Source information:
Chemical mapping of a 177-nucleotide RNA with DMS and 2A3. It was measured as part of the RMDB library 15KREP. Conditions: 150 mM KOAc, 10 mM MgCl2 and 150 mM bicine (pH 8.5), 24 C. 2A3 adducts were read by reverse transcription with SuperScript II with manganese. DMS adducts were read by reverse transcription with MarathonRT.
[RMDB]
RNA sequence: GGGAACGACUCGAGUAGAGUCGAAAAGGGAACAAGGAAACAGGAGGAGGAUCGGUAGAAAAGAGCGAGACCUCCGAUUCGAGAGCUCCUGGACUCCUCAGCUCUGGAGUCCUCCGACCCGUGAGGUGAUACGAUUUUUGUUCGCAAAAAUCGUAUCAAAAGAAACAACAACAACAAC
Reactivity to DMS in 0.01 (KOAc 150mM, MgCl2 10mM, bicine 150mM(pH8.5), 24C), signal-to-noise 1, nucleotides 027 to 126: g000g010g000a090a060c100a160a110g010g000a020a100a190c040a000g040g020a060g030g020a210g010g000a100u000c020g000g010u020a040g010a100a030a090a120g000a040g000c050g000a090g000a110c130c020u010c020c010g020a020u000u000c010g000a170g010a110g000c000u000c000c000u000g000g000a050c130u020c000c010u000c180a050g000c080u010c050u010g000g020a080g000u010c000c020u020c030c090g000a080c060c030c020g020u010g010a110g000g000u020
Reactivity to 2A3 in 0.01 (KOAc 150mM, MgCl2 10mM, bicine 150mM(pH8.5), 24C), signal-to-noise 1, nucleotides 027 to 126: g000g020g020a080a050c030a030a120g050g000a050a070a010c020a020g010g010a000g040g020a020g010g020a010u010c000g020g060u120a030g060a040a120a050a010g070a000g070c040g010a040g070a090c010c030u040c000c010g020a030u000u000c030g020a050g010a040g190c010u010c000c040u020g010g010a040c010u010c000c000u030c040a020g040c030u100c020u070g010g000a010g000u020c000c010u000c020c010g020a060c000c010c010g010u060g090a070g010g110u050